[RMDB]
RNA sequence: GGGAACGACUCGAGUAGAGUCGAAAAAAAUCAGAUAAACACGCUUGAUGGCAGUUUUUUAAUAGGAACACCCUUCGUGCAAGCGCGAUUUUUGUUGGUAGAGAUCUGGGUGCUUAUGCUUAUUGCGUACUGAAUGAACUUUCGAGUUCAUUCAGUAAAAAGAAACAACAACAACAAC
Reactivity to DMS in 0.01 (KOAc 150mM, MgCl2 10mM, bicine 150mM(pH8.5), 24C), signal-to-noise 5, nucleotides 027 to 126: a040a070a060u010c030a060g010a110u000a070a070a070c050a060c040g010c060u000u000g010a110u010g020g010c070a090g000u010u000u000u000u000u010a080a120u010a110g000g010a030a030c030a120c080c010c080u010u000c120g010u010g020c050a060a060g010c040g040c100g000a060u000u000u010u000u000g020u000u000g000g020u010a060g000a090g000a050u000c050u000g010g020g010u000g010c060u000u000a040u000g010c030u010u000a080u010u000g030c090g020
Reactivity to 2A3 in 0.01 (KOAc 150mM, MgCl2 10mM, bicine 150mM(pH8.5), 24C), signal-to-noise 1, nucleotides 027 to 126: a000a000a000u110c010a000g020a140u090a070a120a000c030a010c020g060c010u040u060g050a010u060g030g000c040a050g000u000u020u000u070u000u080a210a150u100a030g060g030a060a010c030a010c020c010c000u040u080c040g030u040g020c000a050a050g000c040g000c010g020a010u000u050u120u080u090g090u110u070g070g040u070a030g000a000g020a130u060c060u150g010g030g030u030g000c010u090u130a130u140g000c000u040u080a120u270u110g040c000g040

An RNA of 177 nucleotides, treated with DMS and 2A3 and read out base by base. For 2A3, 999 sequencing reads were counted. The DMS profile rests on 5,899 reads. The data come from the RNA Mapping Database (RMDB), library OK2TRN. 2A3 adducts were read by reverse transcription with SuperScript II with manganese.